[RMDB]
RNA sequence: GGGAACGACUCGAGUAGAGUCGAAAAGAUAUGGAGUAACGAACUUUGACCCACCAUCGAUCUCGGAAACGAGGGAGGUGCAAAUCCGUUACUCCUAAGUCAAAACAGAACACUUCGGUGUUCUGAACAUGCCACAAGAGUUCGCUCUUGUGGCAUGAAAAGAAACAACAACAACAAC
Reactivity to 2A3 in 0.01 (KOAc 150mM, MgCl2 10mM, bicine 150mM(pH8.5), 24C), signal-to-noise 2, nucleotides 027 to 126: g010a010u040a050u130g000g000a000g040u020a000a000c030g030a050a050c100u100u100u250g100a130c060c030c040a050c040c000a150u220c020g100a160u070c030u020c040g000g050a060a060a030c000g020a010g000g000g000a040g000g000u030g010c060a060a100a090u020c010c000g060u010u000a000c000u000c000c000u020a090a000g000u020c020a020a000a080a130c020a000g000a000a000c020a000c020u090u200c270g170g010u000g000u000u000c000u010g000a000a000
Reactivity to DMS in 0.01 (KOAc 150mM, MgCl2 10mM, bicine 150mM(pH8.5), 24C), signal-to-noise 2, nucleotides 027 to 126: g010a040u010a300u010g000g000a050g000u000a020a000c000g020a000a070c240u010u000u000g040a090c080c070c040a090c190c000a080u000c060g010a180u010c020u020c040g010g000a130a050a110c010g000a030g030g010g000a200g000g000u000g000c030a040a070a050u000c020c000g040u000u000a010c000u000c000c000u000a020a100g000u000c010a060a110a090a180c010a000g010a000a000c000a010c000u000u020c160g000g000u000g000u010u010c000u000g020a040a140